[RMDB]
RNA sequence: GGGAACGACUCGAGUAGAGUCGAAAAGUCCGGUAGGGAUGGCACUAGGCGCUCCCGAACCGCCGAGUGCGCGACGCGUAUUCCUCGCAGGCCGCCCACAAGUCGCGGCGGUCAUAGUCGGGCCAGACCGCUAAUAUAUGUUCGCAUAUAUUAGCGGAAAAGAAACAACAACAACAAC
Reactivity to DMS in 0.01 (KOAc 150mM, MgCl2 10mM, bicine 150mM(pH8.5), 24C), signal-to-noise 9, nucleotides 027 to 126: g010u000c020c010g020g030u010a080g010g000g000a050u000g010g010c010a030c020u000a100g010g010c010g010c130u000c040c050c060g000a070a100c290c020g000c010c010g010a030g020u000g010c050g010c070g010a050c070g010c080g010u010a130u010u000c070c020u000c080g020c140a140g000g000c010c010g010c000c010c040a110c160a110a120g010u010c140g010c160g010g010c000g000g000u000c020a050u000a060g000u000c010g000g000g010c190c100a110g010a230
Reactivity to 2A3 in 0.01 (KOAc 150mM, MgCl2 10mM, bicine 150mM(pH8.5), 24C), signal-to-noise 6, nucleotides 027 to 126: g020u010c020c010g010g160u190a110g010g050g040a040u060g100g000c000a010c040u020a040g030g010c010g010c040u100c020c030c000g010a060a040c030c000g000c000c010g020a010g010u030g000c070g010c030g060a050c040g030c010g010u030a090u050u060c010c010u030c020g010c030a020g010g010c000c000g010c010c030c000a080c060a130a080g140u250c100g050c080g030g000c000g000g000u000c000a000u040a010g050u050c000g000g010g000c010c020a050g040a050